[RMDB]
RNA sequence: GGGAACGACUCGAGUAGAGUCGAAAACGUCUUUAAUACCACCACGCCGCUGCAGUGGCUGAUGGCUUCUGACGUGGUGGACUACGAGGAGAGCCGCAGCGGUCGCCGCCUCGACGGGCUGGUGUUCCCUAUCGUCUGGUUUCGACCAGACGAUAGGAAAAGAAACAACAACAACAAC
Reactivity to 2A3 in 0.01 (KOAc 150mM, MgCl2 10mM, bicine 150mM(pH8.5), 24C), signal-to-noise 2, nucleotides 027 to 126: c020g080u060c040u060u220u100a170a090u110a140c000c000a000c010c000a020c040g030c030c010g040c040u070g030c020a060g080u060g110g000c000u050g160a120u180g070g030c000u040u040c040u060g100a130c020g010u010g000g010u040g040g060a100c020u090a040c050g070a020g090g000a070g020a010g050c020c030g020c060a040g000c010g020g010u020c040g000c010c040g010c000c010u030c020g070a080c050g030g030g010c040u060g000g010u040g070u050u070c020
Reactivity to DMS in 0.01 (KOAc 150mM, MgCl2 10mM, bicine 150mM(pH8.5), 24C), signal-to-noise 2, nucleotides 027 to 126: c090g000u000c070u010u000u010a100a130u010a150c040c010a020c020c010a030c040g060c030c030g000c090u020g020c080a060g000u000g010g000c050u000g010a050u020g010g040c060u000u000c060u020g020a100c020g040u000g000g000u000g020g010a090c070u000a070c080g000a210g000g010a100g000a060g020c010c030g040c090a040g000c010g000g010u000c020g010c050c010g030c020c020u010c020g000a070c190g000g000g000c070u020g020g000u010g010u010u000c080
Source: RMDB library OK2TRN, as collected in RNAgym.
Structure probing data (2A3 and DMS) for a 177-nucleotide construct.
The 2A3 profile rests on 2,150 reads.
The RNA was probed in 150 mM KOAc, 10 mM MgCl2 and 150 mM bicine (pH 8.5) at 24 C.
For DMS, 2,009 sequencing reads were counted.
Reactivities are rounded to 0.1 and cut off at 0 and 3.